[RMDB]
RNA sequence: GGGAACGACUCGAGUAGAGUCGAAAAUGGCAGAUGGCGUGCCAUAACUCUACUAGUGGGAUACCACGCUUGUGGACCUUAUGCCCACACAGCCAUCCUCUAGUAAGUUUGUAAGACGUCUGAUGACCUCCAUAUAAGGGUUCGCCCUUAUAUGGAGAAAAGAAACAACAACAACAAC
Reactivity to DMS in 0.01 (KOAc 150mM, MgCl2 10mM, bicine 150mM(pH8.5), 24C), signal-to-noise 8, nucleotides 027 to 126: u010g010g010c010a040g000a180u000g000g000c010g010u000g020c050c060a040u010a020a010c010u000c200u000a000c000u000a010g020u010g020g000g000a030u010a090c190c180a130c300g010c020u000u000g010u000g000g010a020c020c290u010u010a120u010g020c000c000c000a000c000a010c220a020g000c010c230a030u000c010c000u000c000u000a010g010u000a010a020g000u000u000u010g010u010a130a140g020a020c020g000u000c010u010g000a220u010g000a170c100
Reactivity to 2A3 in 0.01 (KOAc 150mM, MgCl2 10mM, bicine 150mM(pH8.5), 24C), signal-to-noise 8, nucleotides 027 to 126: u040g030g000c000a010g020a090u070g030g000c020g010u030g110c000c010a040u070a020a010c010u090c070u010a000c000u000a010g020u200g060g000g020a020u060a130c040c120a070c140g000c010u010u030g000u010g000g010a010c010c040u220u190a120u300g020c000c000c000a000c000a010c030a000g000c000c010a010u010c000c000u000c000u010a010g010u010a010a030g010u010u050u060g040u020a040a020g120a030c010g000u000c020u040g060a110u090g080a110c010